[RMDB]
RNA sequence: GGGAACGACUCGAGUAGAGUCGAAAACGCAAUUUGCCGCGCCCCUCCGAGAACAGGUUGACCUGGCGUUGGAGGCGCGGCACCUGUGGCAGUUCAACUACAACUUCCGCCACGUGCGCCACGUGCGCUCCUCGUGUAUGUUCGCAUACACGAGGAGAAAAGAAACAACAACAACAAC
Reactivity to 2A3 in 0.01 (KOAc 150mM, MgCl2 10mM, bicine 150mM(pH8.5), 24C), signal-to-noise 5, nucleotides 027 to 126: c040g030c040a040a090u080u060u200g000c010c010g000c010g000c030c020c010c020u000c010c040g080a130g080a210a050c010a020g050g080u270u280g300a300c010c000u010g000g050c020g030u020u040g050g060a140g020g000c000g010c000g000g000c010a000c000c010u060g000u020g020g000c010a010g020u040u050c100a220a130c090u170a110c070a110a030c020u120u030c070c030g000c000c020a020c010g030u100g010c030g040c010c020a190c100g100u230g030c020g000
Reactivity to DMS in 0.01 (KOAc 150mM, MgCl2 10mM, bicine 150mM(pH8.5), 24C), signal-to-noise 4, nucleotides 027 to 126: c070g000c140a090a090u010u000u000g020c010c000g010c020g020c040c030c010c010u000c070c030g010a110g010a160a140c030a010g010g000u000u000g010a170c020c010u000g000g000c050g000u020u000g030g000a070g020g010c010g030c000g000g000c010a000c110c040u000g030u000g000g030c010a050g010u000u000c130a100a110c150u000a100c180a050a040c070u000u000c070c060g000c020c020a030c030g010u010g000c020g000c030c030a070c150g010u010g000c090g000